[RMDB]
RNA sequence: GGGAACGACUCGAGUAGAGUCGAAAAGAGGAGUCAUUCGUGACUCCUCAAAGGGAGCUCAACUCUCCCGCUCAAGUCCGAGAGCCUUGGGACCCAAAAGAAUGCUGUUCCUGUUCGCAGGAACAAAGUAAACCUUUAUAUUCGUAUAAAGGUUUACAAAAGAAACAACAACAACAAC
Reactivity to 2A3 in 0.01 (KOAc 150mM, MgCl2 10mM, bicine 150mM(pH8.5), 24C), signal-to-noise 5, nucleotides 027 to 126: g000a000g010g010a000g000u010c010a010u090u110c140g090u090g000a000c000u010c010c000u000c000a000a000a000g000g000g000a010g000c020u020c170a020a050c040u010c000u000c080c000c010g000c000u030c010a020a010g010u000c040c040g290a140g000a030g180c010c010u020u010g010g030g030a120c000c010c000a020a100a000a050g140a110a060u160g060c060u040g040u010u010c010c000u010g020u050u060c260g020c060a010g000g000a000a000c000a010a010a010
Reactivity to DMS in 0.01 (KOAc 150mM, MgCl2 10mM, bicine 150mM(pH8.5), 24C), signal-to-noise 6, nucleotides 027 to 126: g000a020g010g010a010g010u000c000a040u000u010c170g020u000g010a010c000u000c000c000u000c000a010a020a080g010g000g010a020g000c190u000c200a090a140c260u010c000u000c000c000c000g000c000u000c010a010a030g010u000c050c020g010a120g000a170g010c160c000u000u000g000g000g000a120c000c000c010a060a060a080a080g000a130a100u010g010c140u000g010u010u000c000c000u000g000u000u010c200g020c010a010g010g000a010a010c000a010a030a110